[RMDB]
RNA sequence: GGGAACGACUCGAGUAGAGUCGAAAAGCCAGACGUUCGCGUCUGGCAGUAGGCUCUUCGGAGCCUACAUAAAAAAAUAAUAAAAAAACACACCUUCUUCGGAAGGUGAGCUAGUUCGGUGACGAACUAGCACCUGCCGGUGACGGCAGGAACGGUAGACGUGAGUCUACCGAGGCUCGCUUCGGCGAGCCAGUACGACGUGAGUCGUACAGUUGGUCUACGGACCAACAUAUAACCUUCACCAAUUAGGUUCAAAUAAGUGGUAUAGAGUACACUUCGGUGUACUCAAAAGAAACAACAACAACAAC
Reactivity to 2A3 in 0.01 (KOAc 150mM, MgCl2 10mM, bicine 150mM(pH8.5), 24C), signal-to-noise 1, nucleotides 027 to 266: g000c000c000a000g020a000c000g040u070u060c240g020c000g220u030c000u010g000g050c000a000g000u010a000g000g000c000u010c000u090u060c150g020g010a000g000c000c000u000a000c000a000u140a000a100a030a000a000a000a000u300a050a070u300a130a030a000a000a000a090a020c050a010c010a000c010c000u020u030c000u060u030c080g110g000a010a000g000g010u010g000a010g000c000u000a000g000u010u000c020g030g080u050g050a050c040g000a000a000c000u000a000g010c000a000c000c000u000g000c020c000g000g120u170g100a070c000g000g000c000a010g000g000a000a050c010g000g000u000a000g000a000c010g020u040g080a050g010u000c000u010a000c000c000g020a030g000g000c010u020c010g000c000u040u040c020g170g020c000g000a000g020c000c000a000g000u000a000c010g010a000c040g040u090g030a010g070u000c000g000u020a010c000a010g000u000u010g000g020u000c020u010a080c300g070g020a010c000c030a010a000c010a040u140a000u010a010a000c030c000u110u110c060a020c050c040a040a000u100u060a090g020g080u160u260c060a070a090a040u120a060a050g050u020g000g010u110a120u120a170
Source: RMDB library POS240, as collected in RNAgym.
Chemical mapping of a 307-nucleotide RNA with 2A3.
2A3 adducts were read by reverse transcription with SuperScript II with manganese.
For 2A3, 1,646 sequencing reads were counted.